This 177-nucleotide RNA was probed chemically with DMS and 2A3. For 2A3 the reverse transcriptase was SuperScript II with manganese. For DMS, 2,676 sequencing reads were counted. In probing experiments dimethyl sulfate is read out at A N1 and C N3, which are open when not base-paired. The data come from the RNA Mapping Database (RMDB), library OK1LIB. The RNA was probed in 150 mM KOAc, 10 mM MgCl2 and 150 mM bicine (pH 8.5) at 24 C.
RNA sequence: GGGAACGACUCGAGUAGAGUCGAAAACUUUAUACUACCACCCCUCUGAGAAUACUUUUAGGACAAGCGAGUACACGCAGUAUACUGCCACUUGUGUUAGAAUACUUUUAGUAGAGAAGAAUACACGCUGCAUAGCUAGUUUCGACUAGCUAUGCAGAAAAGAAACAACAACAACAAC
Reactivity to DMS in 0.01 (KOAc 150mM, MgCl2 10mM, bicine 150mM(pH8.5), 24C), signal-to-noise 2, nucleotides 027 to 126: c040u050u040u030a100u020a140c040u000a080c030c070a130c060c000c020c000u020c010u000g010a120g000a090a090u030a040c110u000u010u050u010a050g030g000a030c040a040a070g000c100g010a170g000u000a050c110a040c120g010c040a060g000u020a070u040a050c070u000g070c020c040a110c050u000u040g000u000g000u000u030a040g010a090a080u010a070c010u000u020u020u020a050g000u000a030g000a040g000a070a110g010a040a050u030a090c070a100c160g020
Reactivity to 2A3 in 0.01 (KOAc 150mM, MgCl2 10mM, bicine 150mM(pH8.5), 24C), signal-to-noise 4, nucleotides 027 to 126: c000u040u100u090a180u090a110c060u030a060c010c050a050c010c010c010c000u010c010u040g120a070g030a050a060u090a130c010u070u070u070u040a040g050g010a010c010a090a050g000c050g070a020g050u110a040c050a010c120g050c020a000g010u060a040u060a200c010u010g020c020c010a040c050u080u040g020u030g140u080u030a020g070a060a030u080a120c030u040u080u050u090a030g010u080a010g010a000g020a240a020g060a050a030u130a090c030a000c090g080